[RMDB]
An RNA of 177 nucleotides, treated with 2A3 and DMS and read out base by base. The reactions ran in a buffer of 150 mM KOAc, 10 mM MgCl2 and 150 mM bicine (pH 8.5), at 24 C. 2A3 adducts were read by reverse transcription with SuperScript II with manganese. DMS adducts were read by reverse transcription with MarathonRT.
RNA sequence: GGGAACGACUCGAGUAGAGUCGAAAAGACUGGUGUGUGUUUAGUGGAUUAUCUGAUCAGCACAUGUGUGACAGUGUUGAUCACAAGUCAUUGCCAGCUCUGUUCAUUUUCUUCCCUGGUCUAACUCAUAAGAAGACAAGUUCGCUUGUCUUCUUAUAAAAGAAACAACAACAACAAC
Reactivity to 2A3 in 0.01 (KOAc 150mM, MgCl2 10mM, bicine 150mM(pH8.5), 24C), signal-to-noise 9, nucleotides 027 to 126: g000a000c010u010g010g020u030g010u010g010u010g050u090u100u180a180g030u090g120g050a130u110u050a090u190c060u040g000a010u010c000a000g030c000a050c080a190u060g070u030g080u110g130a050c020a040g000u000g000u010u000g000a000u010c000a000c010a020a020g040u040c020a040u010u130g030c000c000a010g010c070u000c010u030g050u070u050c040a110u070u090u070u030c030u010u030c010c010c010u030g070g030u030c040u040a060a040c020u040c090
Reactivity to DMS in 0.01 (KOAc 150mM, MgCl2 10mM, bicine 150mM(pH8.5), 24C), signal-to-noise 9, nucleotides 027 to 126: g000a050c010u000g000g010u000g010u010g020u010g010u000u010u010a080g020u010g000g010a080u010u010a100u010c200u000g000a010u000c000a010g010c000a000c010a080u010g030u010g020u020g010a090c070a060g010u000g010u000u000g000a020u000c000a010c140a050a080g010u010c010a040u010u010g000c010c000a020g000c130u000c010u000g000u010u010c110a110u010u000u010u010c090u000u000c010c010c010u000g010g010u010c040u000a060a150c110u010c090